[RMDB]
RNA sequence: GGGAACGACUCGAGUAGAGUCGAAAAUAGGUCUGCUUCAUGCAAUUUGUUCCGGCAACGAUGUGUAGUCGCAAAACAAACUGCUUGGCGAGGUUUGCCCCAGUAUGUAAUGGAAAAGUACAAAAAGUACCAACAGUGGGUUCGCCCACUGUUGGUAAAAAGAAACAACAACAACAAC
Reactivity to DMS in 0.01 (KOAc 150mM, MgCl2 10mM, bicine 150mM(pH8.5), 24C), signal-to-noise 1, nucleotides 027 to 126: u090a080g010g000u000c000u000g020c020u000u050c100a000u000g000c000a030a100u020u010u000g070u000u000c080c040g060g000c010a010a030c000g000a200u080g010u030g000u000a030g000u000c010g050c110a080a030a050a040c000a010a000a070c100u000g000c000u000u000g000g000c070g050a050g020g000u000u000u000g000c140c000c010c120a110g000u000a020u010g050u010a000a060u020g000g030a060a020a030a070g040u040a030c090a030a080a140a030a050g000
Reactivity to 2A3 in 0.01 (KOAc 150mM, MgCl2 10mM, bicine 150mM(pH8.5), 24C), signal-to-noise 1, nucleotides 027 to 126: u230a000g160g000u010c000u020g110c000u040u100c140a070u000g000c000a000a120u020u020u020g000u010u010c010c000g010g000c090a060a000c000g270a300u240g130u030g060u250a040g000u000c010g000c010a000a270a000a000c000a020a020a020c000u040g060c000u040u150g030g000c040g010a050g130g000u050u030u100g150c110c090c000c000a030g000u040a100u180g100u000a030a130u000g000g030a040a030a030a030g010u000a000c050a040a070a000a000a000g070